[RMDB]
RNA sequence: GGGAACGACUCGAGUAGAGUCGAAAAGAUAUGGAUAGCAUCGAUCGUGCACGUCCGCAGAUAUCGGAAACGAUGUAGGACACACGGGAGCUAUCCUAAGUCAAACAGACAUCUUCGGAUGUCUGAAGGGAUAGUUAUUGUUCGCAAUAACUAUCCCAAAAGAAACAACAACAACAAC
Reactivity to DMS in 0.01 (KOAc 150mM, MgCl2 10mM, bicine 150mM(pH8.5), 24C), signal-to-noise 5, nucleotides 027 to 126: g000a040u010a300u010g000g000a020u000a000g020c000a300u010c080g000a060u010c010g000u010g000c100a130c250g010u000c000c010g020c130a140g000a060u000a010u000c010g010g000a110a090a120c000g010a000u000g010u000a120g050g010a010c010a110c010a010c010g000g010g010a050g010c020u000a000u000c000c000u000a010a060g000u000c020a110a110a300c010a000g000a000c010a010u000c000u000u010c210g030g010a010u000g000u000c000u000g010a060a090
Reactivity to 2A3 in 0.01 (KOAc 150mM, MgCl2 10mM, bicine 150mM(pH8.5), 24C), signal-to-noise 5, nucleotides 027 to 126: g030a010u070a030u160g020g000a010u000a000g000c040a280u300c060g160a120u060c010g030u020g010c140a060c300g010u000c010c020g000c070a070g060a230u160a010u080c010g010g010a050a040a030c030g010a000u030g040u120a180g020g000a000c020a010c000a000c070g020g010g000a010g000c000u000a000u030c000c000u000a060a000g040u010c030a050a060a080c010a000g000a000c000a000u000c010u060u090c300g170g000a000u000g010u000c000u010g010a060a050

Structure probing data (DMS and 2A3) for a 177-nucleotide construct. Source: RMDB library TTRDEL, as collected in RNAgym. The RNA was probed in 150 mM KOAc, 10 mM MgCl2 and 150 mM bicine (pH 8.5) at 24 C. 2A3 adducts were read by reverse transcription with SuperScript II with manganese. For 2A3, 12,026 sequencing reads were counted.